[RMDB]
RNA sequence: GGGAACGACUCGAGUAGAGUCGAAAACAUACGGACUUCGGUCCGUAUGAAAGAACCUCAAAUUGACGCAAACUUGCGCGUCAUCGCGAGGAAGCGAGGAAAAAAUCGAGGUGUUCGCACCUCGAAAGUAUAGGGUUGCGUUCGCGCAACCCUAUACAAAAGAAACAACAACAACAAC
Reactivity to DMS in 0.01 (KOAc 150mM, MgCl2 10mM, bicine 150mM(pH8.5), 24C), signal-to-noise 1, nucleotides 027 to 126: c010a000u000a000c010g030g000a000c010u000u000c240g080g010u000c020c000g020u000a000u010g010a030a040a100g040a110a280c000c000u030c040a000a210a190u000u020g030a100c010g000c020a110a110a100c270u040u000g000c160g000c010g000u000c000a030u000c140g050c270g000a060g030g000a080a190g000c080g010a120g000g030a030a010a030a000a050a040u000c010g000a000g020g000u000g000u000u030c210g000c010a030c010c010u000c000g000a000a010a080
Reactivity to 2A3 in 0.01 (KOAc 150mM, MgCl2 10mM, bicine 150mM(pH8.5), 24C), signal-to-noise 1, nucleotides 027 to 126: c000a000u000a000c010g010g000a010c020u030u040c280g070g000u000c010c020g020u000a000u000g010a000a000a000g030a040a060c000c000u020c000a090a100a120u000u050g010a030c000g010c040a020a110a300c200u100u300g030c030g040c000g020u020c040a000u000c030g070c010g000a030g050g020a010a000g040c010g040a090g000g110a150a210a000a000a000a000u040c000g000a000g000g010u020g000u050u090c240g060c080a010c010c030u000c010g020a000a000a000